RNA sequence: GGGAACGACUCGAGUAGAGUCGAAAACAGCAGAAGCCAGGAAGACUUGGACAAGCAUCAAGCAACAGUGGCUAUCGUAUUUAUUCAGUGUCUUCGCUGAGCCACAGCCUCAGCACAAUCAAGAGGGACUUUCAUGAAAGGCAGGAAUGCAGAUAAACGCUUCCACCGUAUUCGUACGGUGGAAGCGAAAAGAAACAACAACAACAAC
Reactivity to 2A3 in 0.01 (KOAc 150mM, MgCl2 10mM, bicine 150mM(pH8.5), 24C), signal-to-noise 2, nucleotides 027 to 156: c040a020g040c060a050g000a100a020g040c000c000a020g030g030a000a040g050a080c010u010u070g000g070a040c020a010a060g110c010a030u070c080a040a030g040c050a010a040c010a030g110u030g060g010c010u040a070u130c000g060u030a110u110u190u030a080u000u190c010a030g010u000g050u090c050u160u180c070g000c020u030g000a010g000c000c050a050c040a080g010c050c020u020c010a020g000c060a000c040a090a050u200c000a010a040g000a040g040g000g000a020c000u060u030u060c150a090u100g090a110a020a000g010g000c000a000g000g040a080a000u020g030c030a000g020a050u110a090a090a030